[RMDB]
RNA sequence: GGGAACGACUCGAGUAGAGUCGAAAAGCAAACUAAUAUGCAUAGUCCUGAUGUUAUAGUAGGUGACUAUGUCAUUAUUAGUGAAAAAUUGUUUGUGCGUAGUAAGGAAGAAGACGGAUUUGCCUUCAUACAGGGAACUUCGGUUCCCUGAAAAGAAACAACAACAACAAC
Reactivity to 2A3 in 0.01 (KOAc 150mM, MgCl2 10mM, bicine 150mM(pH8.5), 24C), signal-to-noise 3, nucleotides 027 to 129: g080c060a020a100a000c020u030a000a000u010a030u010g000c000a020u000a000g010u000c000c010u040g010a120u110g120u210u170a110u100a150g160u020a080g000g030u120g030a000c000u010a010u010g060u110c000a000u010u140a000u000u040a010g000u030g020a000a000a010a020a060u090u100g090u140u050u150g100u060g020c010g030u050a060g020u000a010a050g050g000a010a020g030a000a000g010a060c000g050g000a020u070u010u130g090c020c010u060u050c020a020u000a090
Reactivity to DMS in 0.01 (KOAc 150mM, MgCl2 10mM, bicine 150mM(pH8.5), 24C), signal-to-noise 3, nucleotides 027 to 129: g020c060a080a120a080c030u020a000a000u030a060u010g000c000a040u020a000g050u020c000c000u040g020a140u080g020u060u070a170u110a200g000u030a100g040g000u060g020a030c030u010a030u010g010u090c030a000u000u000a060u000u030a030g000u040g000a020a030a030a070a080u000u000g000u000u010u000g000u100g030c020g060u030a050g030u000a090a100g040g020a070a080g030a050a040g050a050c150g000g000a030u000u000u000g020c070c040u000u000c090a070u000a130
Overview:
An RNA of 170 nucleotides, treated with 2A3 and DMS and read out base by base. Reactivities are rounded to 0.1 and cut off at 0 and 3. The reactions ran in a buffer of 150 mM KOAc, 10 mM MgCl2 and 150 mM bicine (pH 8.5), at 24 C.